Structure probing data (DMS and 2A3) for a 177-nucleotide construct. It was measured as part of the RMDB library OK2TRN. DMS adducts were read by reverse transcription with MarathonRT. DMS (dimethyl sulfate) methylates the pairing face of unpaired adenines and cytosines. For 2A3, 20,408 sequencing reads were counted. The DMS profile rests on 32,468 reads.
RNA sequence: GGGAACGACUCGAGUAGAGUCGAAAACUACAUUGACGGCCAUAUAAUAUAGUGUAAAUGCAAUAUCAAGUUGACUGUCAUUAUCUUCAUAAAUACGACGAACCAAGGUGGCUGCAUUGGGUUUGAACUAUAUAGUAUGGUUCGCCAUACUAUAUAGAAAAGAAACAACAACAACAAC
Reactivity to DMS in 0.01 (KOAc 150mM, MgCl2 10mM, bicine 150mM(pH8.5), 24C), signal-to-noise 9, nucleotides 027 to 126: c020u000a080c080a040u000u000g010a110c020g010g010c000c010a020u000a080u000a100a060u000a050u000a070g020u000g010u010a070a120a090u010g010c040a040a050u000a050u010c130a100a120g010u000u000g000a080c050u010g000u000c020a060u000u000a050u000c080u000u000c160a080u010a060a060a060u010a080c140g010a050c040g000a060a060c080c060a050a110g010g020u000g000g010c030u000g010c030a050u000u000g010g000g000u000u000u000g010a090a190
Reactivity to 2A3 in 0.01 (KOAc 150mM, MgCl2 10mM, bicine 150mM(pH8.5), 24C), signal-to-noise 9, nucleotides 027 to 126: c010u150a050c010a040u020u070g070a100c000g000g000c010c020a040u080a010u030a170a110u110a050u050a090g050u020g040u130a130a220a090u220g000c020a030a020u030a050u170c050a100a080g050u040u040g120a120c040u070g040u050c010a010u010u110a050u040c070u180u030c050a080u080a260a110a020u140a130c100g020a010c010g010a050a010c030c020a060a020g110g000u010g030g000c010u020g010c010a020u020u050g070g000g000u020u050u080g020a030a010